Chemical mapping of a 177-nucleotide RNA with DMS and 2A3. For 2A3 the reverse transcriptase was SuperScript II with manganese. The reactions ran in a buffer of 150 mM KOAc, 10 mM MgCl2 and 150 mM bicine (pH 8.5), at 24 C.

RNA sequence: GGGAACGACUCGAGUAGAGUCGAAAACCCCAAGCACUGUUUUGGUGAUGAGGGCAAGUACCUAUAGGGCAGUGUUUUGCACCUCUGAGAGUGGAGUGGCUCCCUUUGUGGGCUUGGUCCUAGUCUGGCAUCAGUCUUUGUUCGCAAAGACUGAUGCAAAAGAAACAACAACAACAAC
Reactivity to DMS in 0.01 (KOAc 150mM, MgCl2 10mM, bicine 150mM(pH8.5), 24C), signal-to-noise 1, nucleotides 027 to 126: c050c000c010c190a170a110g000c130a080c090u010g020u000u000u020u010g000g020u000g010a030u020g000a110g010g030g030c020a010a010g000u010a010c000c000u010a000u000a000g000g010g020c290a060g020u000g000u000u020u030u030g020c000a060c090c010u000c050u000g000a100g000a110g020u000g000g010a060g050u000g030g000c020u020c000c010c020u000u000u010g000u010g010g000g000c010u000u000g030g020u010c010c010u000a090g020u000c020u000g000
Reactivity to 2A3 in 0.01 (KOAc 150mM, MgCl2 10mM, bicine 150mM(pH8.5), 24C), signal-to-noise 3, nucleotides 027 to 126: c000c000c010c020a080a030g040c020a040c100u090g000u090u100u130u120g110g030u040g030a030u080g030a060g000g020g000c010a000a000g020u050a070c000c000u000a000u040a030g000g000g020c050a000g020u020g070u130u070u080u100g070c020a100c010c000u050c080u070g120a150g010a040g200u180g050g010a030g010u100g020g000c000u030c010c020c000u020u030u020g000u060g020g010g000c010u000u000g050g000u030c000c000u010a020g030u020c030u040g030